Record summary
An RNA of 177 nucleotides, treated with DMS and 2A3 and read out base by base. The reactions ran in a buffer of 150 mM KOAc, 10 mM MgCl2 and 150 mM bicine (pH 8.5), at 24 C. 2A3 adducts were read by reverse transcription with SuperScript II with manganese. DMS adducts were read by reverse transcription with MarathonRT. Values cover nucleotides 27 to 126. For DMS, 4,482 sequencing reads were counted.
RNA sequence: GGGAACGACUCGAGUAGAGUCGAAAAGAAGGGAAAGGAGAUCCAUGGACAGUCUCCAGAGGUUCCUAAGGCCUCGCUCGCGCCUGCCGGGAGGCAGAAUGUCCCGGUUGUCCAUGUAAGAAGAAGACGUGCUAGGAUUAUUCGUAAUCCUAGCACGAAAAGAAACAACAACAACAAC
Reactivity to DMS in 0.01 (KOAc 150mM, MgCl2 10mM, bicine 150mM(pH8.5), 24C), signal-to-noise 3, nucleotides 027 to 126: g010a130a050g000g020g000a020a070a160g050g000a010g000a020u000c130c060a000u000g000g000a020c020a070g020u010c000u010c030c020a080g000a040g000g000u000u010c040c170u030a140a110g000g000c000c000u010c020g010c120u050c120g020c220g000c020c010u010g020c030c020g030g000g000a030g030g000c030a070g020a090a050u000g020u000c010c020c000g020g000u000u000g010u010c000c010a000u000g010u040a080a090g010a090a150g010a130a060g020a270
Reactivity to 2A3 in 0.01 (KOAc 150mM, MgCl2 10mM, bicine 150mM(pH8.5), 24C), signal-to-noise 4, nucleotides 027 to 126: g100a050a050g070g010g030a080a180a120g030g010a000g000a000u010c050c020a000u030g000g000a000c010a030g020u000c010u000c010c030a010g000a000g000g030u130u170c060c010u040a030a060g060g000c010c000u000c010g010c020u090c040g160c070g030c010c000u010g010c000c000g000g000g000a000g000g000c020a060g150a180a070u160g040u010c010c010c000g030g000u020u000g000u000c000c000a000u030g060u120a070a170g030a040a010g040a030a000g130a070